[RMDB]
RNA sequence: GGGAACGACUCGAGUAGAGUCGAAAACACUCUUUCUUAGCAAGUAAGCACCAUAUGUCUUCUAUGGGAACUUGUUUUCAGGAGAUUCCCAGCGCAUGUGUGCUGGCUGGGAAGAGAGGAAUUGGUGUUUUACUAACCAGCAGCGCUUGCCAGAGUACUCAUAGGCAUGCUUCGGCAUGCCUAUGAGAAAAGAAACAACAACAACAAC
Reactivity to 2A3 in 0.01 (KOAc 150mM, MgCl2 10mM, bicine 150mM(pH8.5), 24C), signal-to-noise 2, nucleotides 027 to 156: c030a000c000u010c000u010u150u030c100u130u210a010g020c050a130a020g010u210a040a010g020c010a030c010c060a050u040a100u210g190u080c100u070u070c080u110a100u060g010g010g010a040a000c000u060u160g090u050u230u110u090c060a060g040g120a140g090a220u020u010c000c000c000a000g000c080g000c040a050u100g150u050g120u090g200c040u030g150g000c000u000g000g010g020a050a000g010a020g000a000g010g060a010a040u040u050g020g000u010g000u000u100u150u030a030c030u000a050a080c010c070a030g040c040a000g080c020g020c070u030u070g020c020c040a040g040a010g190u170a050
An RNA of 207 nucleotides, treated with 2A3 and read out base by base. The 2A3 profile rests on 642 reads. For 2A3 the reverse transcriptase was SuperScript II with manganese. Source: RMDB library OK3TST, as collected in RNAgym.